[RMDB]
RNA sequence: GGGAACGACUCGAGUAGAGUCGAAAACGAGGAAGUGCGCCAAUACUGUAGGGAACAAGGUUGGAUCAUCCCUGAAACUCCCAUUAAUGUUGAACGACAUCUCAACAGAGCAGUACUAGUCAUGCAAGCAUGCUCUAGAUUUCGAUCUAGAGCAUGCAAAAGAAACAACAACAACAAC
Reactivity to 2A3 in 0.01 (KOAc 150mM, MgCl2 10mM, bicine 150mM(pH8.5), 24C), signal-to-noise 2, nucleotides 027 to 126: c030g000a020g070g070a180a050g120u050g040c050g000c050c010a000a050u110a170c050u030g060u130a060g060g030g070a030a010c030a090a050g070g020u050u040g050g010a090u050c020a020u010c060c000c000u000g000a040a070a080c030u040c020c000c040a060u030u190a080a100u150g050u040u000g000a040a010c070g140a040c100a030u030c030u010c030a000a080c000a010g080a000g020c020a000g030u050a060c100u070a030g030u050c010a060u040g010c000a020a060
Reactivity to DMS in 0.01 (KOAc 150mM, MgCl2 10mM, bicine 150mM(pH8.5), 24C), signal-to-noise 3, nucleotides 027 to 126: c090g000a070g000g000a100a070g000u010g010c110g000c060c020a100a060u000a050c030u010g020u010a120g010g000g000a060a100c070a080a050g000g010u010u000g000g000a130u000c060a060u000c030c020c000u010g000a060a120a150c120u000c000c000c010a140u000u000a090a090u000g000u000u000g010a030a080c120g000a070c200a080u010c100u010c040a030a030c020a060g010a100g010c010a040g010u000a070c110u000a140g000u010c070a060u010g010c080a080a110